[RMDB]
RNA sequence: GGGAACGACUCGAGUAGAGUCGAAAAGCCUGUGUUACCAGCUACUUGGGAGGCUGAGGCCGGAGGAUCGCUUAAGCCUGGAAGGUCGAGGCUGCGGUGAGCUGUGAUUGUGCCACUGCACUCUAGCCUGAACAACAGAGUGAGACCCCCCACACACACAUCGCUAUCUUUUCGAAGAUAGCGAUGUAAAAGAAACAACAACAACAAC
Reactivity to 2A3 in 0.01 (KOAc 150mM, MgCl2 10mM, bicine 150mM(pH8.5), 24C), signal-to-noise 1, nucleotides 027 to 156: g050c000c020u020g020u000g000u050u040a100c070c030a000g080c100u080a070c110u210u040g070g000g020a010g000g020c000u030g040a040g000g060c050c010g020g000a050g020g000a080u040c020g000c100u060u100a070a000g040c000c010u090g090g020a180a040g010g000u050c020g020a000g060g000c040u090g010c020g040g040u010g050a130g000c000u040g060u070g230a300u080u170g020u050g030c000c000a010c000u050g000c010a000c020u040c030u000a010g000c000c000u030g050a010a000c000a010a000c000a000g000a050g110u000g010a090g070a070c020c040c010c030c070c010a040c000a000c000a020c020